[RMDB]
RNA sequence: GGGAACGACUCGAGUAGAGUCGAAAAGAAGAGAAGUGAGUAAACGCCUAUUCGGUAUAAGCACAGCCCGUCAAAAGGCGUGCGGCGAGGGCACCGGACGCUGUGCUUAUAACUGGGCCUUCGAAGACCCAUUAGUGAUGUUCGCAUCACUAAUGGGAAAAGAAACAACAACAACAAC
Reactivity to 2A3 in 0.01 (KOAc 150mM, MgCl2 10mM, bicine 150mM(pH8.5), 24C), signal-to-noise 8, nucleotides 027 to 126: g120a020a010g090a010g030a100a010g040u120g130a020g020u140a090a110a060c060g000c000c000u050a100u090u200c050g020g000u010a000u000a020a000g000c000a000c000a000g000c020c080c040g030u040c050a060a090a080a040g160g040c100g020u020g000c000g040g020c140g060a130g030g090g000c020a020c010c010g030g010a010c040g000c000u000g000u000g000c000u010u000a010u000a030a010c010u020g010g010g000c010c000u020u020c020g040a050a020g080a060
Reactivity to DMS in 0.01 (KOAc 150mM, MgCl2 10mM, bicine 150mM(pH8.5), 24C), signal-to-noise 4, nucleotides 027 to 126: g010a100a050g010a150g000a100a050g000u010g000a090g000u010a020a040a090c110g020c000c010u020a080u030u050c080g000g000u000a000u010a020a020g000c000a000c010a010g000c040c180c070g020u000c050a050a060a140a150g000g020c150g040u010g010c000g040g010c090g010a100g010g020g010c020a040c040c030g010g010a060c070g020c010u000g000u000g000c000u000u000a000u000a030a030c060u000g000g000g030c020c030u000u000c040g020a070a130g000a200
Structure probing data (2A3 and DMS) for a 177-nucleotide construct. Conditions: 150 mM KOAc, 10 mM MgCl2 and 150 mM bicine (pH 8.5), 24 C. For DMS the reverse transcriptase was MarathonRT. For 2A3 the reverse transcriptase was SuperScript II with manganese.